This 177-nucleotide RNA was probed chemically with 2A3 and DMS. For 2A3 the reverse transcriptase was SuperScript II with manganese. High DMS reactivity at an A or C suggests that its Watson-Crick edge is free. Conditions: 150 mM KOAc, 10 mM MgCl2 and 150 mM bicine (pH 8.5), 24 C.
RNA sequence: GGGAACGACUCGAGUAGAGUCGAAAAGUUGGCUGAUGGCAACAUGAAAGGACACGUGCAAGACCUGAAAAGGUCACUUGUAGGGCACGCAGACGCAAGCAAAAAGCACGUUCAAGACUUGAAAUAGCCCCUAACUGUUAUUCGUAACAGUUAGGGGAAAAGAAACAACAACAACAAC
Reactivity to 2A3 in 0.01 (KOAc 150mM, MgCl2 10mM, bicine 150mM(pH8.5), 24C), signal-to-noise 4, nucleotides 027 to 126: g030u030u030g050g000c060u110g070a140u140g090g000c040a040a020c040a110u110g080a070a060a000g080g000a020c030a000c070g000u010g000c000a040a060g020a020c010c000u010g040a030a010a020a050g000g000u000c000a000c010u010u000g010u040a120g010g080g030c060a040c090g020c030a020g030a040c030g000c010a010a040g010c020a050a010a040a030a020g010c010a000c020g010u020u040c020a030a020g030a040c010u050u050g040a040a050a060u120a050g020
Reactivity to DMS in 0.01 (KOAc 150mM, MgCl2 10mM, bicine 150mM(pH8.5), 24C), signal-to-noise 6, nucleotides 027 to 126: g020u020u000g000g000c050u010g000a120u010g010g010c050a030a060c060a060u010g000a100a100a050g000g010a040c170a020c020g030u000g010c000a070a040g000a020c000c000u000g000a100a060a110a010g000g000u000c010a060c040u000u000g000u000a130g010g000g000c060a070c120g000c070a050g000a090c100g020c020a040a040g030c090a030a050a080a100a120g000c020a020c010g000u010u000c080a050a070g010a090c040u020u000g020a070a090a110u020a120g000